[RMDB]
RNA sequence: GGGAACGACUCGAGUAGAGUCGAAAAGAGAGAAAUACCGCGCGAAAGCAGAGAAAGGACUGUAAGGACGCGAAAUCCUUUCCGUCAGUUACCGCAAGAAAGAGCGAUGUGUGACGAAUAGAGAGAGCCGAUAUUACGCGUUCGCGCGUAAUAUCGGAAAAGAAACAACAACAACAAC
Reactivity to DMS in 0.01 (KOAc 150mM, MgCl2 10mM, bicine 150mM(pH8.5), 24C), signal-to-noise 2, nucleotides 027 to 126: g030a110g010a050g000a060a050a030u030a080c130c050g000c020g020c030g020a010a050a040g000c000a050g000a100g000a000a060a090g000g000a010c000u000g000u010a080a100g000g000a030c050g010c100g050a130a120a190u000c050c020u000u030u000c000c030g000u000c040a060g010u020u000a070c060c000g030c050a070a150g000a030a140a090g000a150g040c060g010a100u040g000u000g010u000g050a060c010g010a070a090u060a070g000a110g000a030g020a060g000
Reactivity to 2A3 in 0.01 (KOAc 150mM, MgCl2 10mM, bicine 150mM(pH8.5), 24C), signal-to-noise 1, nucleotides 027 to 126: g110a000g000a000g000a050a060a020u050a110c030c020g070c010g020c060g110a030a000a080g000c010a010g000a000g010a060a010a010g020g000a020c000u010g030u030a070a040g090g080a000c060g020c020g080a000a000a060u020c000c010u000u060u030c000c000g030u020c000a030g000u010u080a070c020c000g000c040a000a110g090a140a150a010g060a060g000c010g030a050u160g100u020g010u030g010a000c060g030a060a020u070a090g040a010g010a000g010a020g000